Source information: The data come from the RNA Mapping Database (RMDB), library M2PK50. An RNA of 177 nucleotides, treated with 2A3 and DMS and read out base by base. DMS adducts were read by reverse transcription with MarathonRT.
[RMDB]
RNA sequence: GGGAACGACUCGAGUAGAGUCGAAAAGGCCUCGCGUUCGCGCGAGGCCAAAUUAAAUGGGCAAGCGGCACCGUCCGCCAAAACAAACGGAAAUAGGAAUAAAAAGCUAACCGUUCGCGGUUAGCAAGUAAUCAAGAAAGUUCGCUUUCUUGAUUACAAAAGAAACAACAACAACAAC
Reactivity to 2A3 in 0.01 (KOAc 150mM, MgCl2 10mM, bicine 150mM(pH8.5), 24C), signal-to-noise 2, nucleotides 027 to 126: g030g020c030c000u000c000g020c060g070u060u070c210g020c040g020c070g070a020g020g000c020c000a000a010a000u010u000a020a000a010u040g000g050g040c050a060a030g020c000g010g020c010a010c080c010g120u160c030c000g010c010c020a020a070a010a000c000a040a010a000c020g000g110a020a030a020u140a080g070g140a110a070u140a160a170a090a020a020g000c010u000a000a000c000c000g020u010u030c180g020c000g050g000u010u010a000g020c010a010a000
Reactivity to DMS in 0.01 (KOAc 150mM, MgCl2 10mM, bicine 150mM(pH8.5), 24C), signal-to-noise 2, nucleotides 027 to 126: g040g040c000c000u000c000g050c020g060u020u010c240g030c020g060c000g060a040g020g050c000c000a010a000a010u010u010a040a060a120u010g020g000g010c080a090a120g010c010g000g020c000a100c040c020g000u000c010c000g000c000c100a090a040a030a140c090a010a010a010c020g010g000a060a090a110u010a070g000g010a100a110u030a050a100a140a100a090g010c000u000a000a020c000c000g010u000u000c230g010c020g000g000u010u000a000g010c010a000a050